Chemical mapping of a 207-nucleotide RNA with 2A3 and DMS. DMS adducts were read by reverse transcription with MarathonRT. The RNA was probed in 150 mM KOAc, 10 mM MgCl2 and 150 mM bicine (pH 8.5) at 24 C.

RNA sequence: GGGAACGACUCGAGUAGAGUCGAAAACCAGCCAGCGCAAAACCUCGUCCUCGACGACGGCGCGCUGCACCCACACCCCGCUUGUGCAGAUGGUCGUACCCGACUUGUACUGGCUGGCGCACGAGUAGGCGUAUCCAAGUACCUGCUUUCCGCGGCGCGGUACAGAAGGAUUCGUCCUUCUGUACCGAAAAGAAACAACAACAACAAC
Reactivity to 2A3 in 0.01 (KOAc 150mM, MgCl2 10mM, bicine 150mM(pH8.5), 24C), signal-to-noise 5, nucleotides 027 to 156: c030c000a000g090c070c020a010g010c020g000c020a040a060a060a120c010c020u030c010g010u020c020c180u220c210g060a040c020g010a020c120g020g020c020g010c010g000c010u010g000c010a060c000c030c000a100c010a050c040c040c010c020g010c040u070u090g000u020g020c020a030g030a300u110g110g000u010c010g010u040a100c040c060c040g070a110c090u080u110g010u020a010c020u100g030g010c010u040g040g000c010g000c010a050c040g040a040g040u080a070g020g030c050g010u040a060u070c070c080a110a030g040u030a080c000c010u020g020c000u070u040u030c050c060g020c030g060g000c060g000
Reactivity to DMS in 0.01 (KOAc 150mM, MgCl2 10mM, bicine 150mM(pH8.5), 24C), signal-to-noise 1, nucleotides 027 to 156: c000c000a100g020c070c010a000g000c050g040c020a040a040a110a150c030c010u010c030g010u000c010c130u020c210g030a030c000g020a030c010g060g010c070g010c020g000c040u000g010c060a060c050c070c010a080c110a150c050c040c040c010g020c110u000u020g010u010g010c030a060g020a120u000g010g000u000c030g010u020a070c030c020c040g020a100c050u010u000g020u000a020c030u030g050g030c040u000g000g020c090g020c020a070c020g000a020g020u000a040g000g060c050g050u000a130u000c150c110a010a230g000u000a040c070c030u000g000c060u000u000u000c060c050g000c060g010g020c090g010
For 2A3, 5,198 sequencing reads were counted.